[RMDB]
RNA sequence: GGGAACGACUCGAGUAGAGUCGAAAAAUAUGCUUCAAAAAAUGUGUUGAGUCUGUCAAUGAUUCUAAUUUAAGUUCGCAAGAAGAGCAAUGUUUGUCUAACUGUGUGAAUCGGUUUUUGGAUACUACAAAGAGUGUGUAUUCGUACACACUCUUUGAAAAGAAACAACAACAACAAC
Reactivity to DMS in 0.01 (KOAc 150mM, MgCl2 10mM, bicine 150mM(pH8.5), 24C), signal-to-noise 9, nucleotides 027 to 126: a070u000a060u000g010c080u000u000c040a020a030a090a060a060a070u010g010u000g010u010u000g000a050g010u000c020u010g010u010c220a090a060u000g000a030u000u000c020u000a060a060u010u000u010a110a110g000u000u000c050g010c110a050a050g010a080a070g000a070g010c040a050a060u000g010u000u010u000g010u010c030u000a040a090c020u000g010u000g020u010g010a090a060u010c050g010g000u000u000u000u000u000g020g000a080u010a090c090u010a120
Reactivity to 2A3 in 0.01 (KOAc 150mM, MgCl2 10mM, bicine 150mM(pH8.5), 24C), signal-to-noise 3, nucleotides 027 to 126: a000u170a040u100g020c030u030u060c030a090a030a020a020a040a070u160g060u020g010u080u040g000a010g040u000c000u060g170u150c030a040a110u080g030a040u050u010c020u060a020a030u090u080u080a090a060g030u030u030c020g000c040a030a030g040a050a010g030a030g070c010a040a080u230g110u140u120u070g050u080c000u020a040a030c000u030g030u010g000u000g150a020a010u100c040g040g000u000u000u010u020u050g070g030a030u120a160c010u100a030